[RMDB]
RNA sequence: GGGAACGACUCGAGUAGAGUCGAAAAGCGUUACAAUCAUUCUCUCACGGUACGAAUGAUGCGCAAAAAUCAAUGGGUAUUAUUACGUUGGCAUUGAUUGUCGCUAAUGUACAGAAUGAUGGCAGUGUCGCUUCGGACGUUUCGACGUCCGAAGCGAAAAAGAAACAACAACAACAAC
Reactivity to 2A3 in 0.01 (KOAc 150mM, MgCl2 10mM, bicine 150mM(pH8.5), 24C), signal-to-noise 1, nucleotides 027 to 126: g110c000g030u040u000a110c160a000a000u030c000a070u000u000c000u000c000u060c070a290c010g000g000u000a050c000g030a160a000u080g000a000u110g100c060g000c000a000a040a220a220a000u040c000a000a000u030g000g000g150u150a130u150u210a110u040u030a190c140g000u080u190g110g020c000a000u030u030g000a000u000u020g190u300c000g030c000u010a000a000u230g000u000a080c000a000g130a010a010u150g070a000u000g130g000c130a040g000u000g080